[RMDB]
RNA sequence: GGGAACGACUCGAGUAGAGUCGAAAAAAUACUGUGUUGACACCAAAGUGAUCGGAGAGGAUCUCUUCCAUUGCAAACUGGGGGGAAACUGGACAUGUAUACCAGGGGAACAAGUUGCCUAUAGGGGAAGUACUGAUGCAUUCGUGCAUCAGUACUUAAAAGAAACAACAACAACAAC
Reactivity to DMS in 0.01 (KOAc 150mM, MgCl2 10mM, bicine 150mM(pH8.5), 24C), signal-to-noise 3, nucleotides 027 to 126: a080a010u030a040c030u020g040u000g020u000u020g000a100c030a050c080c040a060a060a110g000u020g000a070u050c240g000g020a100g010a070g000g010a090u020c000u000c030u000u010c000c030a030u010u020g030c110a050a060a080c140u010g000g000g040g010g020g020a090a060a090c060u000g000g000a110c110a050u020g030u020a050u030a130c040c080a040g010g000g010g000a060a010c130a070a110g000u010u000g010c060c030u050a080u020a090g000g000g010g000
Reactivity to 2A3 in 0.01 (KOAc 150mM, MgCl2 10mM, bicine 150mM(pH8.5), 24C), signal-to-noise 2, nucleotides 027 to 126: a000a000u220a050c060u110g020u010g000u160u000g070a030c040a000c020c080a000a000a000g040u020g020a040u000c030g010g050a040g000a020g140g060a060u020c020u000c000u150u000c020c000a070u000u060g130c050a040a020a080c080u030g000g030g000g000g000g040a020a010a050c050u070g010g000a020c030a080u220g080u150a060u050a100c050c000a010g030g000g010g000a020a020c030a040a160g030u000u050g010c000c010u100a120u180a090g000g000g000g000